[RMDB]
RNA sequence: GGGAACGACUCGAGUAGAGUCGAAAACAGACAUAUCUCAUAUAUCAAAUCUUACGGCACUGGAGGAAUUGAAUCUGGGAGGAUGUUACUACAUAACUUCAGGCUGGGAAGCACUAAGCGAAUUACCGCUUCUCCGUUUAUUCGUAAACGGAGAAGCAAAAGAAACAACAACAACAAC
Reactivity to DMS in 0.01 (KOAc 150mM, MgCl2 10mM, bicine 150mM(pH8.5), 24C), signal-to-noise 2, nucleotides 027 to 126: c030a070g020a120c070a110u000a090u080c040u000c020a090u010a100u040a090u020c000a080a110a060u000c020u020u040a100c050g030g000c000a080c100u000g000g000a060g000g000a080a190u000u020g000a040a030u000c090u000g010g040g010a050g020g000a060u020g000u000u050a030c090u000a160c300a130u000a060a040c110u000u000c050a070g010g010c050u000g000g010g000a080a090g000c210a080c030u060a040a020g000c040g060a050a150u020u050a040c110c110
Reactivity to 2A3 in 0.01 (KOAc 150mM, MgCl2 10mM, bicine 150mM(pH8.5), 24C), signal-to-noise 4, nucleotides 027 to 126: c030a000g180a050c040a090u140a140u050c030u030c040a070u130a050u060a040u260c070a040a120a020u040c000u080u080a080c050g010g000c100a030c230u020g010g040a030g050g040a070a120u120u050g040a070a030u030c050u030g040g070g000a010g030g010a030u040g040u080u080a060c030u050a010c010a060u110a150a030c020u040u030c040a030g010g060c000u000g030g000g040a040a050g010c040a030c090u070a060a000g040c050g030a020a030u140u170a100c000c130
This 177-nucleotide RNA was probed chemically with DMS and 2A3.
High DMS reactivity at an A or C suggests that its Watson-Crick edge is free.
The 2A3 profile rests on 2,773 reads.